RNA sequence: GGGAACGACUCGAGUAGAGUCGAAAAUAGACGCACAGGGCGCGUUACCGCCUCGUGAUAUCUGUUGCUCCAAGGCAGACCGGCAGGAGUAGUCCAUUCGAGAGGCUUGCCCUCGUGAGCCAUAGCCCAAGGUGUAGACGUUCGCGUCUACACCUUGAAAAGAAACAACAACAACAAC
Reactivity to DMS in 0.01 (KOAc 150mM, MgCl2 10mM, bicine 150mM(pH8.5), 24C), signal-to-noise 5, nucleotides 027 to 126: u010a070g010a050c160g010c010a020c030a040g000g000g000c020g040c190g030u010u010a120c280c090g000c020c000u010c030g010u020g020a050u020a060u010c060u010g020u020u000g010c070u040c000c040a120a110g020g000c010a080g000a100c170c080g000g010c070a090g030g010a060g010u020a040g020u000c080c140a160u010u020c050g010a100g000a060g000g010c030u000u020g010c000c020c000u000c170g000u010g010a050g030c000c100a120u020a060g020c010c000
Reactivity to 2A3 in 0.01 (KOAc 150mM, MgCl2 10mM, bicine 150mM(pH8.5), 24C), signal-to-noise 5, nucleotides 027 to 126: u060a010g050a010c010g010c040a010c010a040g000g030g030c020g000c070g130u070u120a140c050c040g030c010c010u030c020g050u110g070a050u050a070u130c040u040g100u040u050g020c000u000c000c020a060a080g100g000c040a050g040a280c040c040g060g030c040a030g000g040a030g010u060a010g050u070c060c030a060u090u110c060g000a010g000a020g130g000c030u040u110g010c000c000c000u010c070g050u070g010a010g010c000c010a100u110a060g050c000c000
An RNA of 177 nucleotides, treated with DMS and 2A3 and read out base by base. Conditions: 150 mM KOAc, 10 mM MgCl2 and 150 mM bicine (pH 8.5), 24 C. For DMS the reverse transcriptase was MarathonRT. The data come from the RNA Mapping Database (RMDB), library OK1LIB.